An RNA of 207 nucleotides, treated with 2A3 and DMS and read out base by base. The DMS profile rests on 5,397 reads. It was measured as part of the RMDB library OK3TST. DMS (dimethyl sulfate) methylates the pairing face of unpaired adenines and cytosines.
[RMDB]
RNA sequence: GGGAACGACUCGAGUAGAGUCGAAAAGGAGCUCAAGAGCCAGGGUCUCAACCGGAACGCACUUGUCAACAUGACCCGUAUCCCCAAAAGCACCCUCUACCGCAAUAUCGAACAACCCGAGCAGUUCAAGUGCUCCGAGUUGGGGCAGAUCGCCGAACUUAGGGAAUAUGUUCGCAUAUUCCCUAAGAAAAGAAACAACAACAACAAC
Reactivity to 2A3 in 0.01 (KOAc 150mM, MgCl2 10mM, bicine 150mM(pH8.5), 24C), signal-to-noise 3, nucleotides 027 to 156: g040g010a040g010c030u060c130a060a120g040a010g140c050c010a040g050g010g020u000c010u010c020a020a000c020c020g010g020a050a080c100g020c010a000c010u030u030g020u100c030a040a060c030a180u150g070a080c000c000c000g010u060a070u030c000c020c010c000a010a080a040a050g060c010a070c010c040c010u060c050u070a030c050c000g030c040a050a080u090a120u190c010g040a020a070c020a020a040c060c020c020g020a040g030c050a010g000u050u070c020a040a010g020u000g000c010u010c000c030g050a090g050u000u000g000g000g000g000c000a020g010a080u050c050g020c060c020g090a060a060
Reactivity to DMS in 0.01 (KOAc 150mM, MgCl2 10mM, bicine 150mM(pH8.5), 24C), signal-to-noise 2, nucleotides 027 to 156: g000g020a090g030c040u010c040a070a140g010a150g020c040c010a040g000g040g000u010c020u010c030a040a030c040c020g000g030a060a080c160g020c020a050c030u010u000g000u000c080a070a110c040a080u000g000a060c000c000c020g010u000a110u000c020c010c010c050a050a060a110a170g040c070a090c040c000c010u010c030u000a070c030c050g000c070a050a100u000a100u000c040g000a050a090c020a130a100c020c000c000g020a070g030c040a150g010u000u000c040a020a090g020u010g020c020u000c010c010g020a100g020u010u000g030g000g040g030c010a080g000a090u000c050g000c000c030g000a160a210
The reactions ran in a buffer of 150 mM KOAc, 10 mM MgCl2 and 150 mM bicine (pH 8.5), at 24 C.
Values cover nucleotides 27 to 156.
Reactivities are rounded to 0.1 and cut off at 0 and 3.